RNA sequence: GGGAACGACUCGAGUAGAGUCGAAAAGUCAUUCAGGAAAAGGGCGUUGCCGCCCUCAUUCUCAACGACACGCGCAUUGCAGGCCGCGUCGGGGCAGAUGGCAUCCAUAUCGAGGGCAAGCCUGCCAGUUUUACUGGACUUUCGAGUCCAGUAAAACAAAAGAAACAACAACAACAAC
Reactivity to DMS in 0.01 (KOAc 150mM, MgCl2 10mM, bicine 150mM(pH8.5), 24C), signal-to-noise 3, nucleotides 027 to 126: g020u000c030a010u010u010c130a120g000g010a030a080a180a040g010g000g020c000g020u010u000g010c300c040g000c000c000c000u000c080a050u000u010c010u000c080a130a140c090g000a040c050a080c040g010c090g020c030a050u020u000g030c160a080g000g010c010c010g010c010g000u000c040g010g000g000g050c140a050g000a030u010g000g010c020a120u000c010c010a040u000a060u000c080g000a120g010g000g000c040a090a110g020c040c030u000g010c050c140a110
Reactivity to 2A3 in 0.01 (KOAc 150mM, MgCl2 10mM, bicine 150mM(pH8.5), 24C), signal-to-noise 2, nucleotides 027 to 126: g040u030c040a050u140u050c040a040g000g100a050a010a000a010g070g000g000c030g210u270u240g120c100c010g000c000c020c000u010c030a000u010u000c010u020c000a000a050c020g030a000c020a010c050g070c020g000c020a070u070u250g010c030a050g080g000c000c010g010c020g020u020c010g000g000g020g000c020a030g030a170u050g010g030c020a010u000c020c010a030u070a040u130c070g050a140g010g030g030c040a040a000g060c030c000u010g030c010c000a020